An RNA of 177 nucleotides, treated with 2A3 and DMS and read out base by base. Values cover nucleotides 27 to 126. The reactions ran in a buffer of 150 mM KOAc, 10 mM MgCl2 and 150 mM bicine (pH 8.5), at 24 C.
RNA sequence: GGGAACGACUCGAGUAGAGUCGAAAAAGAUAUGGAUUUAUACCUCGUUUGAGAGCGAUAAGAAGGGAUCGGAAACGAUCCUCUUCUUUUGACGCUCAAAUGAGACGAGGUAUAAAUCCUAAGUCGACUACCUAUUAUCGUUCGCGAUAAUAGGUAGAAAAGAAACAACAACAACAAC
Reactivity to 2A3 in 0.01 (KOAc 150mM, MgCl2 10mM, bicine 150mM(pH8.5), 24C), signal-to-noise 2, nucleotides 027 to 126: a030g010a010u080a040u110g000g010a000u010u020u010a000u010a000c000c000u000c030g030u020u070u160g300a280g000a010g020c070g080a140u070a240a010g010a010a000g040g020g000a010u000c020g020g010a020a080a020c030g000a000u010c030c010u000c000u000u000c000u020u020u020u070g040a010c000g000c000u000c020a000a020a050u300g010a050g020a000c000g000a000g020g000u010a000u000a000a030a000u010c000c000u000a000a000g000u010c000g000a020
Reactivity to DMS in 0.01 (KOAc 150mM, MgCl2 10mM, bicine 150mM(pH8.5), 24C), signal-to-noise 3, nucleotides 027 to 126: a120g000a010u000a300u010g000g000a020u000u000u000a000u000a010c000c000u000c000g010u000u000u000g020a300g000a020g020c030g020a170u000a030a020g010a020a020g010g000g000a010u000c010g000g020a080a050a120c010g000a000u000c000c000u010c000u000u000c000u000u000u000u000g010a210c040g020c000u000c000a060a100a150u000g020a140g010a020c000g010a010g010g020u000a000u000a000a000a000u000c000c000u000a000a070g010u000c010g010a300